This 177-nucleotide RNA was probed chemically with DMS and 2A3. Values cover nucleotides 27 to 126. For 2A3, 821 sequencing reads were counted. Source: RMDB libraries RFM100 and RFMREP, as collected in RNAgym. 2A3 adducts were read by reverse transcription with SuperScript II with manganese. The RNA was probed in 150 mM KOAc, 10 mM MgCl2 and 150 mM bicine (pH 8.5) at 24 C. For DMS the reverse transcriptase was MarathonRT.
[RMDB]
RNA sequence: GGGAACGACUCGAGUAGAGUCGAAAACGCGGCACAGUCCAAACCGAAGCCUUCGGGCAAUGUGGUGUUCGGACUGACUUUCAUCGUUUGACCGUUCGUGUGAAGUCUCCUGAAACGGAGCGCGAUAGCACGGUUACCUCUUCGGAGGUAACCGUGCAAAAGAAACAACAACAACAAC
Reactivity to DMS in 0.01 (KOAc 150mM, MgCl2 10mM, bicine 150mM(pH8.5), 24C), signal-to-noise 2, nucleotides 027 to 126: c000g000c200g000g070c300a140c010a010g020u000c000c000a030a100a070c000c030g000a090a220g010c000c000u000u100c280g040g000g040c000a080a040u000g010u050g010g000u000g010u020u000c210g000g000a030c000u050g000a060c050u020u000u000c090a090u000c050g000u000u030u020g000a140c040c000g000u020u000c040g060u040g000u010g000a060a100g000u000c000u000c020c010u020g000a070a050a140c150g000g000a080g000c080g020c030g000a060u020a100
Reactivity to 2A3 in 0.01 (KOAc 150mM, MgCl2 10mM, bicine 150mM(pH8.5), 24C), signal-to-noise 2, nucleotides 027 to 126: c000g020c000g090g010c060a000c000a030g010u000c000c020a000a030a000c020c020g070a020a000g070c000c000u030u110c160g030g000g000c000a000a060u230g060u230g000g000u050g140u110u060c080g020g000a000c000u000g000a010c010u090u080u090c020a210u100c050g060u020u050u120g120a070c030c010g000u050u010c030g010u070g040u000g100a060a140g020u010c000u030c000c000u030g030a070a030a030c120g050g000a010g040c030g000c010g030a000u040a040